[RMDB]
RNA sequence: GGGAACGACUCGAGUAGAGUCGAAAAAUACAUGGACAAAAAAUAUGCCAUAUCCGCCAUCACACGAGCAAAACUAAAAGUAGUAUGGGUAAGUGUCGAGGUGUCAAACCGAAUGACCCUGCUUGACCCGAAUACAGCUAUUCGUAGCUGUAUUCGGAAAAGAAACAACAACAACAAC
Reactivity to DMS in 0.01 (KOAc 150mM, MgCl2 10mM, bicine 150mM(pH8.5), 24C), signal-to-noise 1, nucleotides 027 to 126: a080u000a060c120a050u010g020g000a030c040a020a010a140a070a050a100u040a060u010g010c000c030a040u000a080u030c030c020g010c030c020a080u010c020a030c000a010c010g020a100g000c100a030a080a090a090c110u010a040a100a050a110g030u000a050g020u000a060u000g000g010g010u000a040a070g020u000g010u030c060g000a080g010g000u010g000u010c090a020a080a050c030c030g000a060a150u000g000a060c020c000c010u000g000c030u000u010g000a090c190
Reactivity to 2A3 in 0.01 (KOAc 150mM, MgCl2 10mM, bicine 150mM(pH8.5), 24C), signal-to-noise 2, nucleotides 027 to 126: a000u090a000c050a060u030g020g020a030c040a040a160a050a040a030a020u200a100u180g010c020c000a010u040a020u080c010c030g020c000c000a110u090c030a010c020a000c060g040a020g040c050a000a040a090a170c120u190a180a060a100a040g060u060a040g030u050a070u190g030g000g000u030a120a070g030u020g080u140c090g020a000g110g000u090g110u140c020a120a060a060c010c080g030a080a050u080g010a020c040c010c010u010g000c020u040u060g100a090c030

Chemical mapping of a 177-nucleotide RNA with DMS and 2A3. It was measured as part of the RMDB library OK2TST. The RNA was probed in 150 mM KOAc, 10 mM MgCl2 and 150 mM bicine (pH 8.5) at 24 C. For 2A3 the reverse transcriptase was SuperScript II with manganese. DMS adducts were read by reverse transcription with MarathonRT. The DMS profile rests on 956 reads.